An RNA of 177 nucleotides, treated with DMS and 2A3 and read out base by base. The 2A3 profile rests on 9,505 reads. 2A3 adducts were read by reverse transcription with SuperScript II with manganese. The data come from the RNA Mapping Database (RMDB), library OK1LIB.
RNA sequence: GGGAACGACUCGAGUAGAGUCGAAAAGAAUACACAAAGUCCUAUAAACCUCAAUAAUCGCUCGUUAGGAGCGACACGCGAGGACUUUGGCGUGUCCAUCCAACGAAAUAAGCUCGAAAGACGAGCAACCGCUAUACUAGUUCGCUAGUAUAGCGGUAAAAGAAACAACAACAACAAC
Reactivity to DMS in 0.01 (KOAc 150mM, MgCl2 10mM, bicine 150mM(pH8.5), 24C), signal-to-noise 4, nucleotides 027 to 126: g040a180a070u030a030c110a050c020a000a000a000g030u000c000c000u060a300u000a080a100a140c090c040u000c130a060a070u000a070a100u010c140g010c000u000c000g000u010u010a130g010g000a010g000c160g020a000c020a020c070g020c040g010a080g010g000a010c010u000u000u020g000g040c070g020u000g010u010c000c030a270u010c020c020a070a090c120g000a030a080a090u030a060a050g000c070u030c020g000a190a170a080g000a120c030g010a010g000c000a080
Reactivity to 2A3 in 0.01 (KOAc 150mM, MgCl2 10mM, bicine 150mM(pH8.5), 24C), signal-to-noise 7, nucleotides 027 to 126: g010a000a060u170a030c030a000c000a050a000a000g010u000c000c000u090a100u200a220a160a070c010c020u070c060a100a070u160a130a070u120c100g000c020u000c010g080u100u100a070g010g050a000g000c010g000a000c000a000c000g020c000g010a130g020g020a010c000u000u000u010g020g010c010g000u000g000u000c010c010a020u000c010c010a020a050c040g060a050a030a150u240a140a040g020c030u020c040g060a140a050a020g080a020c010g000a000g000c020a010